[RMDB]
RNA sequence: GGGAACGACUCGAGUAGAGUCGAAAAUAUUUUUGAAUCAUGUUUUCAUACUAUGCAUCAUUCAUGUCUUUCUGUGCAUUCAUAUUUUACAUAAAAAAUUAAAUACCAUGCUUCAUAUCAACAUUCCGAAUACAAGGUCAUUCGUGACCUUGUAUUCAAAAGAAACAACAACAACAAC
Reactivity to DMS in 0.01 (KOAc 150mM, MgCl2 10mM, bicine 150mM(pH8.5), 24C), signal-to-noise 1, nucleotides 027 to 126: u010a000u010u010u010u000u000g010a150a100u010c100a050u000g010u010u020u000u000c100a090u000a180c100u010a050u010g000c040a010u000c090a050u000u010c120a010u000g000u000c040u000u000u000c030u020g010u000g020c020a070u000u000c010a100u010a020u000u000u000u000a120c040a040u000a010a030a070a060a040a070u020u000a050a060a140u030a130c100c020a030u000g010c020u010u000c000a030u010a060u010c110a030a080c130a130u000u020c030c030
Reactivity to 2A3 in 0.01 (KOAc 150mM, MgCl2 10mM, bicine 150mM(pH8.5), 24C), signal-to-noise 2, nucleotides 027 to 126: u050a000u010u200u070u030u090g000a000a010u000c050a030u040g010u040u130u070u050c050a080u110a180c050u130a060u090g040c000a030u020c010a000u110u010c040a030u020g060u020c080u020u130u080c050u110g100u090g000c010a030u020u000c030a020u030a110u240u110u140u160a020c000a020u300a300a050a000a020a000a040u090u230a140a030a010u050a120c000c000a010u010g010c030u000u000c000a010u050a040u140c010a010a060c010a040u180u000c030c030
Structure probing data (DMS and 2A3) for a 177-nucleotide construct. The 2A3 profile rests on 1,278 reads.